RNA sequence: GGGAACGACUCGAGUAGAGUCGAAAAUGGUAAAGAGUUACCUUGCAGCACGUACGUGCAGAGCACCGCUGCCACUGCUGAGGAGAUAGAGGUGCAUAUGCCCCCAGAUACUCCUGACCGCACGCUGGUUCACCAUGUAAUUCGUUACAUGGUGAACAAAAGAAACAACAACAACAAC
Reactivity to 2A3 in 0.01 (KOAc 150mM, MgCl2 10mM, bicine 150mM(pH8.5), 24C), signal-to-noise 4, nucleotides 027 to 126: u110g010g000u070a060a010a080g240a110g080u060u060a040c030c000u030u080g010c020a020g010c010a010c090g080u300a040c070g030u080g000c040a010g040a010g070c000a010c020c050g010c050u030g020c000c010a040c030u030g000c040u040g040a020g030g020a040g020a020u080a060g120a080g020g040u060g020c010a030u090a080u300g050c060c000c000c010c000a010g020a110u100a070c000u000c000c000u000g010a040c000c010g030c010a010c050g030c030u050g040
Reactivity to DMS in 0.01 (KOAc 150mM, MgCl2 10mM, bicine 150mM(pH8.5), 24C), signal-to-noise 7, nucleotides 027 to 126: u010g020g010u000a020a070a130g000a120g010u010u000a050c030c020u000u000g030c040a090g010c020a050c090g020u010a050c210g030u000g010c020a060g000a120g000c050a050c050c050g010c050u000g000c010c040a060c050u010g010c060u000g010a080g010g000a050g000a080u010a060g010a070g010g000u010g020c030a130u000a110u000g000c010c020c000c010c020a100g000a140u000a070c040u000c020c020u000g010a120c060c050g000c080a050c130g010c130u000g010